[RMDB]
RNA sequence: GGGAACGACUCGAGUAGAGUCGAAAAGGUGAUCGUCCUCGAGUUUCUUGAUUUUCUUCUUCUCCUUCCGGAGGUCUCUUUCGAGAUCUUCUAACCUUUUUCUUCCAUUCACCCACUUCUCGAGGACCUCUUCUCUUCCCUCGCGCUUCUUCUUCUGCCAAUUCCUAUCGUUCGCGAUAGGAAUUGGAAAAGAAACAACAACAACAAC
Reactivity to 2A3 in 0.01 (KOAc 150mM, MgCl2 10mM, bicine 150mM(pH8.5), 24C), signal-to-noise 1, nucleotides 027 to 156: g020g010u040g010a080u060c060g010u000c000c010u010c000g010a010g010u090u190u100c050u150u130g110a170u160u120u080u070c060u100u000c010u070u000c020u020c040c020u120u080c020c050g020g020a000g030g000u000c000u000c000u100u300u300c230g000a020g000a000u000c000u000u030c010u030a000a030c000c000u020u180u070u080u150c060u090u120c060c010a050u100u100c060a080c020c020c000a130c050u080u070c020u010c010g020a000g000g000a020c010c010u000c000u150u050c040u000c000u020u010c020c000c000u030c060g020c000g010c040u080u050c020u090u000c000u090u000c030u110g100